[RMDB]
An RNA of 177 nucleotides, treated with DMS and 2A3 and read out base by base. For 2A3, 7,082 sequencing reads were counted. DMS adducts were read by reverse transcription with MarathonRT. The RNA was probed in 150 mM KOAc, 10 mM MgCl2 and 150 mM bicine (pH 8.5) at 24 C. In probing experiments dimethyl sulfate is read out at A N1 and C N3, which are open when not base-paired.
RNA sequence: GGGAACGACUCGAGUAGAGUCGAAAAUACAUUCACAUACCGACAACUGACGCCUGGACGAAUGGUGAAUUAUCAGCUGUAUGUCAUGGAUGAGGCCCACUUCACUGACCCGGCUAGUAUAGCUGCAAAUUCUUCUCCAAUUCGUUGGAGAAGAAUUAAAAGAAACAACAACAACAAC
Reactivity to DMS in 0.01 (KOAc 150mM, MgCl2 10mM, bicine 150mM(pH8.5), 24C), signal-to-noise 7, nucleotides 027 to 126: u000a120c060a050u010u000c040a040c060a090u010a090c080c090g000a100c070a040a090c040u010g010a070c090g010c020c010u000g010g010a130c190g000a090a060u010g000g010u000g010a100a060u000u010a130u010c030a020g010c040u000g000u000a040u010g010u010c100a120u000g000g000a030u010g010a110g010g010c000c010c010a120c100u000u000c080a050c100u010g000a080c060c100c030g010g000c030u000a070g010u010a060u010a040g000c010u010g010c190a060
Reactivity to 2A3 in 0.01 (KOAc 150mM, MgCl2 10mM, bicine 150mM(pH8.5), 24C), signal-to-noise 6, nucleotides 027 to 126: u090a000c010a030u010u050c030a010c000a050u070a040c020c010g080a030c060a170a040c040u040g030a020c030g030c020c020u070g060g090a100c060g080a090a090u140g010g030u030g050a080a130u220u090a060u120c020a000g040c000u030g030u060a030u050g040u040c060a070u080g030g000a020u010g030a040g020g040c010c010c020a030c040u120u100c060a070c060u050g050a060c000c000c030g030g010c030u010a020g080u100a190u080a120g030c040u040g000c050a030